Structure probing data (DMS) for a 177-nucleotide construct. Conditions: 150 mM KOAc, 10 mM MgCl2 and 150 mM bicine (pH 8.5), 24 C. Source: RMDB library TTRDES, as collected in RNAgym.

RNA sequence: GGGAACGACUCGAGUAGAGUCGAAAAAAAAAGAUAUGGACCACAAAUGGCGUUACCGAUGAAAUUCCCUCGGAAACGAGGGAAUGGAGGUAACGAACUACCAUACUUGUGGUCCUAAGUCAAAAAACUACCUUAUUUCGUUCGCGAAAUAAGGUAGAAAAGAAACAACAACAACAAC
Reactivity to DMS in 0.01 (KOAc 150mM, MgCl2 10mM, bicine 150mM(pH8.5), 24C), signal-to-noise 1, nucleotides 027 to 126: a050a040a070a110a080g010a020u000a010u020g000g000a020c010c000a000c000a010a060a020u000g000g000c010g010u000u000a010c000c000g000a090u000g020a130a140a010u000u000c010c010c000u000c000g020g010a000a000a020c010g010a010g000g000g000a000a000u000g000g000a010g000g010u000a000a010c000g000a020a020c020u030a300c100c000a000u000a070c180u000u010g000u000g000g010u000c000c000u000a000a040g000u000c000a000a040a060a090a070a190